[RMDB]
Source: RMDB library OK2TST, as collected in RNAgym. Chemical mapping of a 177-nucleotide RNA with 2A3 and DMS. The reactions ran in a buffer of 150 mM KOAc, 10 mM MgCl2 and 150 mM bicine (pH 8.5), at 24 C. Values cover nucleotides 27 to 126. 2A3 is a SHAPE reagent: it acylates the 2'-hydroxyl of flexible nucleotides of all four kinds. The DMS profile rests on 6,876 reads. The 2A3 profile rests on 4,850 reads.
RNA sequence: GGGAACGACUCGAGUAGAGUCGAAAACUUAUCUCAGGUUUGGAACCAUCCCUUCAAGAUUCAAAGAUUGUGCAUCCUUACUGUCAAUCGGGCAUGUAUGUAAUUUAACUGGGAUGACAUUGGAAGAUCGAGUAAUUUAGUUCGCUAAAUUACUCGAAAAAGAAACAACAACAACAAC
Reactivity to 2A3 in 0.01 (KOAc 150mM, MgCl2 10mM, bicine 150mM(pH8.5), 24C), signal-to-noise 4, nucleotides 027 to 126: c010u070u040a060u090c030u020c070a060g060g080u080u120u110g090g030a040a030c020c000a060u030c010c000c000u040u070c080a080a060g030a150u080u030c030a080a040a070g050a080u060u080g040u080g060c000a020u040c030c020u080u080a070c050u030g070u120c010a080a170u160c020g010g000g000c050a030u130g010u090a050u080g050u060a090a160u050u100u090a080a070c060u040g010g000g000a010u010g020a020c030a060u040u110g070g060a070a030g040a130
Reactivity to DMS in 0.01 (KOAc 150mM, MgCl2 10mM, bicine 150mM(pH8.5), 24C), signal-to-noise 6, nucleotides 027 to 126: c070u010u010a070u000c060u000c090a060g000g010u000u000u010g020g000a110a110c090c050a110u000c020c020c010u000u000c100a120a110g020a080u000u000c070a060a100a130g010a060u000u010g010u000g000c030a030u000c060c020u000u000a060c150u010g010u000c090a070a090u000c150g030g010g000c100a030u010g010u010a040u010g010u000a060a060u000u010u000a070a080c130u000g000g000g000a020u000g000a030c130a060u010u010g010g010a130a090g000a150